[RMDB]
RNA sequence: GGGAACGACUCGAGUAGAGUCGAAAAUCUAAGCUGGCAGAUAGAUGUUUAUUGAACCGCUUAAGUUCCGUUGUGAAGUUUUCGUCUUUCAGGCUGUAUUUCAUAACACUACUGUAGUUCACACAUAGAACUACUUUUGCUUCGGCAAAAGUAGUUCAAAAGAAACAACAACAACAAC
Reactivity to DMS in 0.01 (KOAc 150mM, MgCl2 10mM, bicine 150mM(pH8.5), 24C), signal-to-noise 1, nucleotides 027 to 126: u010c020u010a060a090g050c020u000g060g010c040a300g000a020u000a050g000a150u010g000u000u010u010a040u020u000g020a150a270c020c070g020c050u050u010a050a100g010u000u010c070c030g010u000u000g010u000g010a080a040g010u000u010u010u010c210g050u010c020u000u000u000c300a110g000g020c020u000g010u000a010u010u000u010c050a030u000a020a010c040a070c150u020a090c120u000g020u000a000g000u000u000c070a200c110a080c120a150u000a070